[RMDB]
RNA sequence: GGGAACGACUCGAGUAGAGUCGAAAAGUUGACGUGGUGCUCUGCUUGGCUGUGUGUCGGUGUGGCUUGCCCCCCUGCAGAGGGUGGCGCGGGUCCGCCGUUGAAGCGAGGGAACCGGGUCAGGCCGGAAACGGAGCAGCCCACCCCACGCACGUCCGCUAUAGUCUGACUUCGGUCAGACUAUAGCAAAAGAAACAACAACAACAAC
Reactivity to 2A3 in 0.01 (KOAc 150mM, MgCl2 10mM, bicine 150mM(pH8.5), 24C), signal-to-noise 1, nucleotides 027 to 156: g020u030u030g090a100c080g000u030g040g000u030g030c030u000c050u200g130c040u120u130g130g030c050u040g060u060g010u030g060u170c030g000g000u010g050u170g000g010c000u010u020g030c000c000c000c000c000c000u010g060c090a050g030a050g230g000g010u220g090g000c090g000c000g020g000g020u000c000c000g010c000c000g040u000u070g060a090a000g010c000g010a090g010g010g000a060a100c120c100g000g000g000u060c040a000g020g090c000c000g020g000a030a010a000c060g000g000a000g020c000a000g030c000c000c020a030c000c000c020c030a030c000g040c000a000c040g000u000c000c030
Structure probing data (2A3) for a 207-nucleotide construct. The 2A3 profile rests on 735 reads. The data come from the RNA Mapping Database (RMDB), library ARCHII. The reactions ran in a buffer of 150 mM KOAc, 10 mM MgCl2 and 150 mM bicine (pH 8.5), at 24 C. 2A3 adducts were read by reverse transcription with SuperScript II with manganese.